Chemical mapping of a 177-nucleotide RNA with DMS and 2A3.
RNA sequence: GGGAACGACUCGAGUAGAGUCGAAAAGACACAGACUGAAUCGGUGUGAGAGGCAGUUAGGUAGAUGUUAUAUAGCCAUGAGUUAAAGUGUUGGAAAGUUAAUCUAUACUGAUUCCUACUCAGGCAGGCUUGUCGUACAUUUCGAUGUAUGACGAGCAAAAGAAACAACAACAACAAC
Reactivity to DMS in 0.01 (KOAc 150mM, MgCl2 10mM, bicine 150mM(pH8.5), 24C), signal-to-noise 9, nucleotides 027 to 126: g010a160c050a040c050a120g000a050c060u010g010a050a090u010c050g010g020u010g010u020g010a100g010a060g000g010c070a030g000u010u010a050g010g010u010a050g010a080u010g010u010u010a080u030a110u020a100g010c010c010a080u010g010a040g000u010u020a060a100a080g010u010g000u010u010g010g010a060a080a060g010u010u020a080a090u040c120u010a070u020a050c030u000g000a110u010u000c050c030u000a050c040u010c010a040g000g000c040a130g000
Reactivity to 2A3 in 0.01 (KOAc 150mM, MgCl2 10mM, bicine 150mM(pH8.5), 24C), signal-to-noise 9, nucleotides 027 to 126: g070a000c020a010c020a060g100a040c030u080g050a090a070u090c050g110g010u100g030u090g090a130g000a020g060g020c050a020g010u050u080a050g020g070u050a040g010a100u070g070u230u050a150u060a050u090a160g020c030c070a160u030g010a010g020u040u130a130a100a040g080u110g090u140u070g060g040a100a050a010g010u080u180a090a090u060c070u080a080u050a150c010u020g030a110u040u010c000c000u010a040c000u000c010a010g010g000c010a000g100
It was measured as part of the RMDB library OK1LIB.